[RMDB]
Description
Chemical mapping of a 207-nucleotide RNA with 2A3. Values cover nucleotides 27 to 156. The RNA was probed in 150 mM KOAc, 10 mM MgCl2 and 150 mM bicine (pH 8.5) at 24 C. Source: RMDB library VIROID, as collected in RNAgym.
RNA sequence: GGGAACGACUCGAGUAGAGUCGAAAACUUUUUUCUCUUUCCAAGCUCGACCCAUUGUUCCAGAAUGUCCUCUCUGGACGGAGUAGGGAUCUGCUUCUUGGAUGGAGUUUCCAUUUUAGGGAAUCGGGGGAUCCGCCCAAAAUUCUCACAUCUUUCGACUACCUCAUUGGUUCGCCAAUGAGGUAGUAAAAGAAACAACAACAACAAC
Reactivity to 2A3 in 0.01 (KOAc 150mM, MgCl2 10mM, bicine 150mM(pH8.5), 24C), signal-to-noise 2, nucleotides 027 to 156: c040u300u190u010u000u110u020c000u010c000u010u000u000c000c020a000a000g000c020u070c100g050a020c000c000c000a080u160u190g110u180u030c030c000a000g030a040a110u130g130u160c030c050u090c030u030c020u020g010g010a010c010g000g040a090g050u300a200g010g010g040a150u020c040u140g040c110u050u090c000u010u060g000g020a000u000g000g000a000g000u000u020u020c000c000a050u040u120u070u300a080g000g000g000a010a010u070c080g010g020g010g040g130a150u030c110c070g090c090c070c050a000a110a090a140u060u000c080u030c020a070c010a090u070c000u040u040u090c100g030